[RMDB]
Chemical mapping of a 207-nucleotide RNA with 2A3. It was measured as part of the RMDB library M2RFPK. Reactivities are rounded to 0.1 and cut off at 0 and 3. Conditions: 150 mM KOAc, 10 mM MgCl2 and 150 mM bicine (pH 8.5), 24 C.
RNA sequence: GGGAACGACUCGAGUAGAGUCGAAAAAGUGGCAGGGCGUACGCGGCCUGCCACAUGCAAGAGAAGAAGCGUUCAACCAAGCCGUGACAGGCAAGUCAGGGCUUCGGCGGGAAAUUGCUCUUACCAAAAAACCUCCUUUCCUUCGGGAAAGGAGGAACAUAGACAUCACGUUCGCGUGAUGUCUAUGAAAAGAAACAACAACAACAAC
Reactivity to 2A3 in 0.01 (KOAc 150mM, MgCl2 10mM, bicine 150mM(pH8.5), 24C), signal-to-noise 1, nucleotides 027 to 156: a000g000u000g010g000c030a010g000g000g080c040g020u060a020c170g010c010g130g050c000c010u000g020c010c000a000c010a020u010g020c030a020a090g000a050g080a110a030g010a050a030g000c000g040u040u050c010a000a000c000c000a000a000g000c000c010g210u000g000a010c010a070g150g210c070a100a040g000u030c000a050g000g070g000c000u020u090c120g010g000c020g050g050g050a060a060a010u140u150g000c000u000c000u000u110a120c000c030a050a100a030a030a000a040c000c010u000c000c000u000u000u000c010c000u040u050c210g080g000g000a000a010a000g000g000a000g000g010a000a000